[RMDB]
An RNA of 177 nucleotides, treated with 2A3 and read out base by base. The data come from the RNA Mapping Database (RMDB), library RFM100. For 2A3, 604 sequencing reads were counted.
RNA sequence: GGGAACGACUCGAGUAGAGUCGAAAAACAGCGCCUGCGAUGGCAUAUAACCGUAUUGCGGAUGGAGCGUCACGUGAGGACUGUGAAGCACAAUGCGAUAUGUUCUGAUUAUAUGGCGAGUUUGCUUGACGAGACCAAAUUUCGAUUUGGUCUCGUCAAAAGAAACAACAACAACAAC
Reactivity to 2A3 in 0.01 (KOAc 150mM, MgCl2 10mM, bicine 150mM(pH8.5), 24C), signal-to-noise 2, nucleotides 027 to 126: a000c010a000g090c000g010c060c000u060g080c010g090a100u030g050g000c000a000u030a020u000a040a010c050c030g020u000a030u000u140g000c120g110g010a120u060g140g110a030g000c000g000u000c000a070c130g140u160g130a200g050g010a000c030u040g020u050g030a090a000g100c010a000c000a080a020u060g000c000g000a000u020a020u000g080u170u190c000u100g080a040u050u060a060u020a050u010g060g010c130g010a030g110u000u000u080g240c020u020u000